[RMDB]
RNA sequence: GGGAACGACUCGAGUAGAGUCGAAAAGAUAUGGAUCAGGUAUUUUAGCCAACAGCUCGGAAACGAGACAUGGCUGGAUACUGAUCCUAAGUCAAAAGCUUCUAUGGUCUUCGGACCAUAGAAGCAAGAUGUACGAUUAGUUCGCUAAUCGUACAUCAAAAGAAACAACAACAACAAC
Reactivity to DMS in 0.01 (KOAc 150mM, MgCl2 10mM, bicine 150mM(pH8.5), 24C), signal-to-noise 5, nucleotides 027 to 126: g000a040u010a300u010g000g000a010u000c000a010g000g010u000a000u000u000u000u020a010g020c000c000a040a100c250a150g010c000u000c000g010g000a090a080a230c010g010a010g000a030c100a130u000g000g000c010u010g000g010a000u000a010c000u000g010a010u000c010c000u000a010a060g000u000c030a080a090a120a130g000c000u000u000c000u010a000u000g000g010u000c000u000u010c220g000g000a010c000c010a000u000a000g000a000a000g000c010a010a010
Reactivity to 2A3 in 0.01 (KOAc 150mM, MgCl2 10mM, bicine 150mM(pH8.5), 24C), signal-to-noise 5, nucleotides 027 to 126: g020a020u070a020u130g010g010a010u000c020a030g200g080u140a070u020u080u100u300a030g000c010c010a060a080c090a210g030c010u000c010g020g020a080a060a060c010g020a010g030a040c050a070u100g010g000c000u000g000g010a000u000a010c000u000g000a000u000c000c000u010a080a030g050u010c030a000a010a080a180g000c000u000u000c000u020a000u000g000g000u010c010u040u100c300g080g000a000c000c000a000u000a000g000a000a000g000c000a000a010
This 177-nucleotide RNA was probed chemically with DMS and 2A3.
For 2A3, 14,989 sequencing reads were counted.
Values cover nucleotides 27 to 126.
Values are in units of 0.01, from 0 to 300, in steps of 10.
For DMS, 6,145 sequencing reads were counted.